Structure probing data (2A3 and DMS) for a 177-nucleotide construct. For 2A3, 12,186 sequencing reads were counted. It was measured as part of the RMDB library TTRDES. The RNA was probed in 150 mM KOAc, 10 mM MgCl2 and 150 mM bicine (pH 8.5) at 24 C. DMS adducts were read by reverse transcription with MarathonRT. Reactivities are given for positions 27 through 126.
[RMDB]
RNA sequence: GGGAACGACUCGAGUAGAGUCGAAAAGAUAUGGAGCCAUAAGACAUGCUCGUGGUCGGAAACGACCAAACGAGCAACAGCUUAGUGGCUCCUAAGUCAAAGACUAGUGGGUUCGCCCACUAGUCAAUCACUACUAUCACUUCGGUGAUAGUAGUGAAAAAGAAACAACAACAACAAC
Reactivity to 2A3 in 0.01 (KOAc 150mM, MgCl2 10mM, bicine 150mM(pH8.5), 24C), signal-to-noise 4, nucleotides 027 to 126: g010a000u030a020u090g000g010a000g000c000c020a020u010a020a000g040a100c170a240u300g000c000u010c010g020u000g000g000u010c000g010g040a020a000a000c010g000a000c010c000a050a170a010c010g000a000g030c060a030a040c050a020g010c000u050u050a080g150u300g050g000c010u000c000c000u020a010a000g000u000c020a090a060a010g010a010c000u000a000g000u000g020g030g040u050u090c300g200c030c000c000a000c000u000a000g000u000c000a000a000
Reactivity to DMS in 0.01 (KOAc 150mM, MgCl2 10mM, bicine 150mM(pH8.5), 24C), signal-to-noise 5, nucleotides 027 to 126: g000a030u000a100u010g000g000a020g010c000c000a030u000a020a020g000a050c070a250u000g020c000u000c000g050u000g000g010u000c010g020g010a040a030a050c000g020a010c000c010a000a070a080c030g020a010g020c010a080a080c230a120g000c010u000u010a020g060u000g030g000c000u000c000c000u000a010a070g000u000c010a140a150a140g000a010c000u000a000g020u000g000g000g030u010u000c300g010c000c000c000a010c000u000a000g000u000c000a040a080